[RMDB]
RNA sequence: GGGAACGACUCGAGUAGAGUCGAAAAUAGAUAGUGUCAUUUUAGGGUAUCAUCAGCCUUUAGGUGUGUUGUACAUAAGUCACUCUAGUGGUUCUACAACCACAGGCAUGCCACGCUCUACAGGUGGACUAUCGCAGUGAUUCGUCACUGCGAUAGUAAAAGAAACAACAACAACAAC
Reactivity to 2A3 in 0.01 (KOAc 150mM, MgCl2 10mM, bicine 150mM(pH8.5), 24C), signal-to-noise 2, nucleotides 027 to 126: u190a010g080a010u020a050g050u020g090u070c010a080u080u040u080u140a070g030g020g010u050a000u110c010a040u010c030a040g030c020c090u050u030u110a080g060g010u030g000u010g040u040u030g030u050a020c040a030u090a070a040g030u030c010a010c080u050c060u110a050g010u000g010g040u010u060c020u050a030c020a030a010c020c010a020c020a000g010g000c010a010u070g000c040c000a050c040g060c050u050c010u060a050c020a030g110g000u050g000g030
Reactivity to DMS in 0.01 (KOAc 150mM, MgCl2 10mM, bicine 150mM(pH8.5), 24C), signal-to-noise 4, nucleotides 027 to 126: u010a070g010a060u000a070g020u000g010u000c040a070u010u010u000u000a060g000g000g000u010a040u000c090a060u010c110a120g020c010c010u000u000u000a060g020g010u000g010u000g010u000u000g010u000a050c230a100u010a100a060g000u010c010a040c030u000c100u000a080g020u000g000g000u000u010c190u000a070c160a050a040c010c010a010c010a060g000g000c060a050u000g010c050c040a060c060g020c050u000c050u000a050c170a060g000g010u000g010g000